This 207-nucleotide RNA was probed chemically with 2A3.
It was measured as part of the RMDB library M2RFPK.
RNA sequence: GGGAACGACUCGAGUAGAGUCGAAAAGCAACUUAGGAUUUUAGGCUCCCCGUGCGUGUCUCGAACCAUGCCGGGCCAAACCCACGGGGGCAGGCGGUCCCCGUGCGGUCAAAAUCAAACCGCUGGAAAAACAGUUCUAGCUUCGGCUAGAACUGAACAUGACCUACUACUUCGGUAGUAGGUCAUGAAAAGAAACAACAACAACAAC
Reactivity to 2A3 in 0.01 (KOAc 150mM, MgCl2 10mM, bicine 150mM(pH8.5), 24C), signal-to-noise 2, nucleotides 027 to 156: g020c010a040a150c060u160u120a170g090g070a200u180u150u080u150a050g020g050c040u170c000c000c000c040g050u130g020c050g000u030g010u000c070u070c280g040a020a020c060c000a010u030g000c010c000g000g000g020c020c040a080a060a020c000c000c000a000c020g000g000g020g010g010c010a050g040g020c010g000g000u020c000c000c000c000g000u000g020c090g000g000u000c000a070a070a020a080u070c020a070a100a110c020c010g070c080u100g080g000a100a110a010a000a010c000a000g000u010u000c000u000a000g000c000u040u030c220g070g000c000u010a000g000a000a000c020u000g000a000a000